[RMDB]
RNA sequence: GGGAACGACUCGAGUAGAGUCGAAAAAGGGGAGCCCUACCCCACGAGGCCCAGCUCUCCGACCGGAGGAGAGAAAGAAUACUGAGAUAGAAGCUGGUAGGCGCCAGCCUCCCCGAAAAAGGAAAAACCAUUAUAAUACGUUCGCGUAUUAUAAUGGAAAAGAAACAACAACAACAAC
Reactivity to 2A3 in 0.01 (KOAc 150mM, MgCl2 10mM, bicine 150mM(pH8.5), 24C), signal-to-noise 8, nucleotides 027 to 126: a000g020g000g010g000a040g030c000c000c010u050a050c010c000c040c000a020c060g040a060g080g000c010c000c000a020g010c010u000c000u000c000c010g170a200c020c100g070g040a100g020g010a010g020a000g010a020a090a000g040a040a030u160a140c090u100g040a010g020a130u110a070g110a110a020g050c050u030g020g020u070a090g100g080c080g030c030c000a010g000c000c010u010c000c000c000c000g030a100a030a010a010a010g130g020a080a080a010a010a000
Reactivity to DMS in 0.01 (KOAc 150mM, MgCl2 10mM, bicine 150mM(pH8.5), 24C), signal-to-noise 6, nucleotides 027 to 126: a060g000g010g000g000a120g000c020c030c010u020a140c030c010c020c050a130c110g030a120g010g010c050c040c030a130g000c000u000c010u000c000c010g020a180c130c080g010g010a230g000g010a020g000a020g020a070a090a100g020a110a090u000a100c040u010g010a130g000a080u020a110g000a090a080g000c030u000g000g010u020a070g020g010c120g000c010c020a030g000c020c020u000c000c000c000c030g040a020a030a060a070a070g000g010a070a080a060a110a130
Overview
This 177-nucleotide RNA was probed chemically with 2A3 and DMS. For DMS, 12,157 sequencing reads were counted. Values cover nucleotides 27 to 126.